[RMDB]
RNA sequence: GGGAACGACUCGAGUAGAGUCGAAAACAGCACAUCCCUUCUUGAGAAGGUACAGAACACAUUUUACAUGGUUUCACGUGUUUAUAAAGCUGCAUGUUGGCACAAAGACAGCAGACCUGCUCCACUUAGGAGAACUGCUCAGUCCAAUAGUCAGGACCGGAAUAAUAGAAUUCGUUCUAUUAUUCCGAAAAGAAACAACAACAACAAC
Reactivity to DMS in 0.01 (KOAc 150mM, MgCl2 10mM, bicine 150mM(pH8.5), 24C), signal-to-noise 3, nucleotides 027 to 156: c020a100g030c060a130c060a260u010c060c010c030u000u000c070u040u010g020a190g020a070a050g020g030u000a270c090a150g000a060a120c010a050c030a100u000u010u010u000a120c130a110u000g020g010u000u000u000c100a070c060g030u000g010u000u000u000a130u010a090a070a140g020c010u010g010c000a100u010g020u000u000g010g000c080a120c070a080a090a110g000a100c070a060g000c000a050g000a060c020c020u000g020c010u000c010c010a140c210u000u020a130g020g020a060g020a070a300c010u010g000c010u000c030a110g020u000c010c030a000a130u000a120g000u000c060a130g000g000a060c090
Reactivity to 2A3 in 0.01 (KOAc 150mM, MgCl2 10mM, bicine 150mM(pH8.5), 24C), signal-to-noise 6, nucleotides 027 to 156: c020a000g090c020a030c010a120u100c010c020c000u040u020c070u140u300g080a290g010a060a010g000g020u140a050c040a060g100a090a020c110a020c020a100u060u100u130u170a120c150a100u110g020g050u060u110u110c070a060c100g020u050g040u020u110u030a210u060a050a120a040g040c020u000g010c030a060u110g030u070u020g030g000c110a020c030a100a140a020g070a060c030a010g000c010a010g010a100c010c090u140g060c010u010c000c010a110c130u160u130a040g000g000a000g010a010a030c010u010g000c000u010c040a020g010u020c010c000a000a080u070a040g130u110c050a030g040g050a050c060